[RMDB]
Notes:
Source: RMDB library RFMREP, as collected in RNAgym. Structure probing data (2A3 and DMS) for a 177-nucleotide construct. 2A3 adducts were read by reverse transcription with SuperScript II with manganese. For DMS, 1,660 sequencing reads were counted. The reactions ran in a buffer of 150 mM KOAc, 10 mM MgCl2 and 150 mM bicine (pH 8.5), at 24 C.
RNA sequence: GGGAACGACUCGAGUAGAGUCGAAAAGAACCUCCUCUAAUGAGACCAGGCCGAGUGCACCAGUACUCGGCACCACUUCGAAGUAGAAGGAAAAACAAGUCAACCAGGGUUCGCCCUGGUUGACUUGCCGUAUUGAUUACUUCGGUAAUCAAUACGGAAAAGAAACAACAACAACAAC
Reactivity to 2A3 in 0.01 (KOAc 150mM, MgCl2 10mM, bicine 150mM(pH8.5), 24C), signal-to-noise 2, nucleotides 027 to 126: g080a080a080c000c010u010c000c000u010c030u040a090a060u030g040a020g000a060c060c070a040g000g050c000c000g000a000g000u000g000c010a080c110c080a120g000u010a000c000u000c000g000g000c000a000c010c010a020c020u070u060c020g040a140a020g020u050a010g020a130a110g020g020a000a120a020a000a050c000a000a000g010u000c000a010a010c020c000a010g000g000g000u060u060c110g090c000c000c000u000g000g000u010u000g000a000c010u000u000g000
Reactivity to DMS in 0.01 (KOAc 150mM, MgCl2 10mM, bicine 150mM(pH8.5), 24C), signal-to-noise 3, nucleotides 027 to 126: g010a200a230c010c000u000c000c000u000c020u000a030a030u000g000a300g000a050c120c130a110g000g010c020c000g000a030g010u000g010c010a150c280c210a150g010u000a020c000u000c010g010g030c020a020c100c110a130c050u020u000c010g000a210a130g010u000a000g000a030a030g010g010a030a090a050a050a270c010a030a010g000u000c000a000a020c010c010a010g000g000g030u000u010c200g010c000c000c000u000g000g010u010u000g000a000c000u000u000g010